An RNA of 177 nucleotides, treated with 2A3 and DMS and read out base by base. For DMS, 66,487 sequencing reads were counted. It was measured as part of the RMDB library OK1LIB.
RNA sequence: GGGAACGACUCGAGUAGAGUCGAAAACAACAGCGUAAUCGCCAUUUGAAGUGAUCGAGUUAGCAUUGACUGAAUGCUAACUCUAUGGUAAUUCAAAGACCAUACGCUGUUCUAAUGACAGUGAUACGAUGUAGUUGUAUUUCGAUAUGACUACAUCAAAAGAAACAACAACAACAAC
Reactivity to 2A3 in 0.01 (KOAc 150mM, MgCl2 10mM, bicine 150mM(pH8.5), 24C), signal-to-noise 9, nucleotides 027 to 126: c050a000a000c000a000g000c000g010u020a090a070u080c050g020c040c040a210u060u060u160g080a090a030g030u030g070a020u040c040g000a000g000u000u000a000g000c010a010u020u060g250a300c130u150g170a050a000u000g000c000u000a000a000c000u000c000u000a000u010g010g020u070a100a140u080u070c060a030a010a030g050a020c010c010a010u000a010c000g000c000u000g000u010u000c010u070a140a140u130g100a040c050a080g110u060g120a060u070a180c100
Reactivity to DMS in 0.01 (KOAc 150mM, MgCl2 10mM, bicine 150mM(pH8.5), 24C), signal-to-noise 9, nucleotides 027 to 126: c190a050a010c000a010g000c010g000u010a030a060u010c120g010c060c060a170u010u020u010g010a060a080g010u020g000a030u000c130g000a010g000u000u000a000g000c000a000u000u010g010a170c180u040g010a060a010u000g000c000u000a000a000c000u000c000u000a010u020g010g010u010a070a070u020u020c120a030a050a040g000a060c170c050a070u000a000c000g000c000u000g000u000u000c080u020a080a060u030g000a090c130a070g010u020g010a110u020a070c230
The 2A3 profile rests on 112,235 reads.